The record gives the reactivity of an RNA of 177 nucleotides to 2A3 and DMS.
Conditions: 150 mM KOAc, 10 mM MgCl2 and 150 mM bicine (pH 8.5), 24 C.
The DMS profile rests on 2,204 reads.
DMS adducts were read by reverse transcription with MarathonRT.
The data come from the RNA Mapping Database (RMDB), library OK1LIB.
Values cover nucleotides 27 to 126.
The 2A3 profile rests on 684 reads.

RNA sequence: GGGAACGACUCGAGUAGAGUCGAAAAAGAACUGCAAACGAUAAUAAUCUCUAUGUUGGUGCCCCAGCUUUAGCUGCAGCUUAAUCCAACGAGGAUUGAAGGUGUGACGGGCAACAGACCCGGAAAAGCCCAUAAAUCGUUUCGACGAUUUAUGGGCAAAAGAAACAACAACAACAAC
Reactivity to 2A3 in 0.01 (KOAc 150mM, MgCl2 10mM, bicine 150mM(pH8.5), 24C), signal-to-noise 1, nucleotides 027 to 126: a000g110a050a050c120u090g040c100a060a120a000c030g130a040u030a110a050u060a020a020u140c060u000c000u040a040u130g030u070u070g000g000u020g000c020c000c000c000a000g000c000u190u020u180a000g040c040u100g040c000a010g000c000u040u050a030a020u040c000c020a040a080c060g080a230g050g000a020u020u150g020a030a030g070g000u020g000u000g050a030c020g000g000g000c000a030a000c020a020g130a040c000c000c130g010g010a110a150a000a000
Reactivity to DMS in 0.01 (KOAc 150mM, MgCl2 10mM, bicine 150mM(pH8.5), 24C), signal-to-noise 2, nucleotides 027 to 126: a110g000a110a120c040u010g060c090a080a020a120c060g000a090u020a020a160u050a060a070u030c010u000c010u010a140u010g010u030u000g000g000u010g000c000c100c300c030a020g050c060u000u020u000a070g000c060u010g010c120a080g030c010u030u000a080a060u000c030c000a070a130c170g030a170g000g000a010u000u000g000a050a180g000g060u000g000u000g000a120c080g000g030g050c020a110a100c150a040g000a080c000c000c000g000g000a040a040a070a130